[RMDB]
RNA sequence: GGGAACGACUCGAGUAGAGUCGAAAAGGGGAACUUGUCGAAUGAAAUGAGCAUCAUCCGCGAGGGCAACAUCCUCGAGCUCAGCUGCAAGGGGGACUUUGCAGAUCAGCUGACACGGAUCGAGUAUCCAGAGACGGUUCCAAGAACCGGAAAUGUGUCUAAAGGAUGAUUUCGAUCAUCCUUUAGAAAAAGAAACAACAACAACAAC
Reactivity to 2A3 in 0.01 (KOAc 150mM, MgCl2 10mM, bicine 150mM(pH8.5), 24C), signal-to-noise 4, nucleotides 027 to 156: g120g030g020g020a050a030c070u220u300g000u030c040g070a120a110u090g050a210a180a140u140g020a010g010c020a140u010c000a010u000c040c000g030c000g000a020g030g000g000c070a190a020c010a180u110c000c000u000c000g000a000g020c010u000c020a020g010c000u010g000c010a030a030g010g010g010g000g030a040c020u020u030u050g010c010a000g010a110u070c030a000g050c000u020g030a010c010a010c090g010g000a010u030c080g010a010g010u090a110u070c020c020a010g000a000g000a040c000g010g000u000u000c010c010a000a020g020a030a010c010c020g010g040a060a100a030u140g090u030g020
Reactivity to DMS in 0.01 (KOAc 150mM, MgCl2 10mM, bicine 150mM(pH8.5), 24C), signal-to-noise 3, nucleotides 027 to 156: g040g020g030g020a050a070c020u000u020g110u000c020g000a140a160u010g010a020a080a130u010g010a100g030c080a220u010c030a070u000c020c000g020c010g010a050g040g010g020c050a120a110c230a300u000c000c010u010c000g000a040g000c010u000c040a070g020c020u000g000c000a030a040g020g010g050g010g010a130c010u000u010u000g010c000a010g020a060u010c050a020g030c000u010g000a100c090a100c010g010g020a040u000c050g020a130g030u000a150u000c020c030a140g010a300g000a080c020g000g000u000u000c040c100a110a090g000a060a110c000c010g020g010a070a100a130u000g020u000g010
This 207-nucleotide RNA was probed chemically with 2A3 and DMS. The 2A3 profile rests on 2,367 reads. The RNA was probed in 150 mM KOAc, 10 mM MgCl2 and 150 mM bicine (pH 8.5) at 24 C. It was measured as part of the RMDB library OK3TST.